[RMDB]
RNA sequence: GGGAACGACUCGAGUAGAGUCGAAAAGUGGCUCUGAAAUUAAGGGAUUUUUAUGCCAGAAAACAAGAUGGGUAUCAACCUGUACAGAGACAUGGUAUUUUUCUACAACUAAGGAAACCCAAAUUGAGCCGUAGCUAAAAUUCGUUUUAGCUACGGCAAAAGAAACAACAACAACAAC
Reactivity to 2A3 in 0.01 (KOAc 150mM, MgCl2 10mM, bicine 150mM(pH8.5), 24C), signal-to-noise 4, nucleotides 027 to 126: g010u000g030g000c000u000c000u000g110a110a180a150u210u090a130a070g050g020g030a140u000u000u210u000u010a020u080g140c000c000a040g120a050a190a060a050c170a040a050g040a140u160g020g000g030u040a010u040c030a000a030c010c000u020g030u080a040c000a010g020a000g000a010c000a010u030g010g050u040a200u020u060u000u010u000c010u030a050c030a240a050c060u220a170a030g000g000a050a030a010c010c000c020a040a120a060u140u140g070a020
Reactivity to DMS in 0.01 (KOAc 150mM, MgCl2 10mM, bicine 150mM(pH8.5), 24C), signal-to-noise 3, nucleotides 027 to 126: g030u000g000g030c040u010c040u010g000a060a130a150u020u080a090a140g010g040g000a100u000u020u020u020u030a080u000g000c000c000a080g000a130a100a120a110c290a060a070g030a170u000g030g000g040u020a030u010c110a030a050c020c000u000g000u020a090c020a010g000a030g000a020c000a000u030g000g000u020a030u010u010u000u020u000c040u000a100c200a050a090c280u040a110a080g000g000a030a020a040c020c000c000a060a050a120u020u020g000a290